RNA sequence: GGGAACGACUCGAGUAGAGUCGAAAAGCUCACGUUCCCGAUAGAGGCUUCGUGAGCGGGUGGCAAGCCUCUAUCGGGAAGCCACCCACCGUACGGUGGACAUGCGAAAGCAUGUCCAUCGUACGGAGCUCCUUCAAGGCUUCGGCCUUGAAGGAGCAAAAGAAACAACAACAACAAC
Reactivity to 2A3 in 0.01 (KOAc 150mM, MgCl2 10mM, bicine 150mM(pH8.5), 24C), signal-to-noise 2, nucleotides 027 to 126: g020c010u050c070a100c090g190u080u040c000c000c010g010a000u000a000g000a000g020g000c030u030u050c170g080u090g060a120g070c070g000g040g040u090g100g050c020a020a000g000c020c000u000c000u010a010u000c010g000g000g000a000a000g020c010c010a050c000c000c000a010c000c000g010u000a000c010g000g000u000g000g000a000c000a000u000g000c010g070a110a030a020g020c000a000u000g000u030c000c000a000u000c000g000u000a010c000g000g000a000